[RMDB]
This 177-nucleotide RNA was probed chemically with 2A3 and DMS. The RNA was probed in 150 mM KOAc, 10 mM MgCl2 and 150 mM bicine (pH 8.5) at 24 C. For 2A3, 1,214 sequencing reads were counted. 2A3 adducts were read by reverse transcription with SuperScript II with manganese. Values are in units of 0.01, from 0 to 300, in steps of 10. Values cover nucleotides 27 to 126. For DMS, 1,071 sequencing reads were counted. DMS adducts were read by reverse transcription with MarathonRT.

RNA sequence: GGGAACGACUCGAGUAGAGUCGAAAAGGCGUCUUCGCUGCCUCGGCCGCCCUGCACUGACCGGUAGCCGCCGUAAUAGCGGCAUUGUUCCCAUAAAAGGAUGUGGGUGUGGGUGCCGAAGUAGCAGGCAUUACGCGUGAUUCGUCACGCGUAAUGCAAAAGAAACAACAACAACAAC
Reactivity to 2A3 in 0.01 (KOAc 150mM, MgCl2 10mM, bicine 150mM(pH8.5), 24C), signal-to-noise 1, nucleotides 027 to 126: g060g020c040g040u030c070u140u130c070g000c050u020g000c000c000u000c000g000g000c040c030g050c050c010c050u040g000c000a000c020u120g140a070c000c040g020g020u060a030g010c000c000g060c000c000g000u010a040a020u130a160g000c000g000g070c010a010u040u210g000u000u060c000c060c000a040u120a030a050a000a000g100g030a070u120g070u160g180g000g000u010g040u000g000g000g000u040g010c000c000g000a000a000g030u010a000g000c010a010g110
Reactivity to DMS in 0.01 (KOAc 150mM, MgCl2 10mM, bicine 150mM(pH8.5), 24C), signal-to-noise 1, nucleotides 027 to 126: g010g010c060g030u000c120u010u000c180g020c010u000g020c010c000u000c010g030g000c030c030g030c070c010c000u010g010c030a020c010u010g000a100c020c080g020g020u000a140g020c030c020g000c000c010g010u000a090a060u000a160g000c030g010g010c000a050u000u010g010u000u000c040c000c000a120u010a050a070a090a060g010g020a080u010g030u010g000g010g000u000g000u000g000g020g000u000g000c010c000g000a030a070g030u000a020g010c000a120g000